[RMDB]
The data come from the RNA Mapping Database (RMDB), library 15KREP. Structure probing data (2A3 and DMS) for a 177-nucleotide construct. For DMS the reverse transcriptase was MarathonRT.
RNA sequence: GGGAACGACUCGAGUAGAGUCGAAAAGGUGGAAACCGAUCUGAAGAAAGGGCCACAUGAAUUCUGUUCACAGCAUACGCUUUAUAUUAAGGAUGGCGACGAUGGUUACUUCCUUCCUUAUCCAGACCGUGAGAAGGAUGUUCGCAUCCUUCUCACGAAAAGAAACAACAACAACAAC
Reactivity to 2A3 in 0.01 (KOAc 150mM, MgCl2 10mM, bicine 150mM(pH8.5), 24C), signal-to-noise 2, nucleotides 027 to 126: g100g010u030g010g000a010a090a150c030c010g000a040u000c080u060g190a120a110g020a020a130a040g050g050g020c000c010a010c020a020u100g090a030a050u090u000c050u010g050u050u080c130a050c020a040g010c040a080u040a190c060g020c020u090u140u060a170u040a050u180u070a040a000g070g030a040u020g020g020c010g020a000c020g040a060u090g030g000u080u020a020c020u060u000c000c000u040u050c000c000u070u030a040u090c010c030a060g080a070c040
Reactivity to DMS in 0.01 (KOAc 150mM, MgCl2 10mM, bicine 150mM(pH8.5), 24C), signal-to-noise 1, nucleotides 027 to 126: g020g030u000g000g000a030a030a080c030c010g010a110u000c020u000g000a150a080g030a090a120a300g040g020g030c010c030a020c140a060u000g000a110a020u000u010c060u000g000u000u000c050a080c030a100g050c070a090u000a110c080g020c050u000u020u010a010u000a100u020u010a100a060g000g000a050u000g020g050c130g010a060c110g000a080u020g010g040u010u000a050c090u010u000c030c010u000u000c050c020u000u000a110u010c070c040a150g000a110c190
For 2A3, 881 sequencing reads were counted.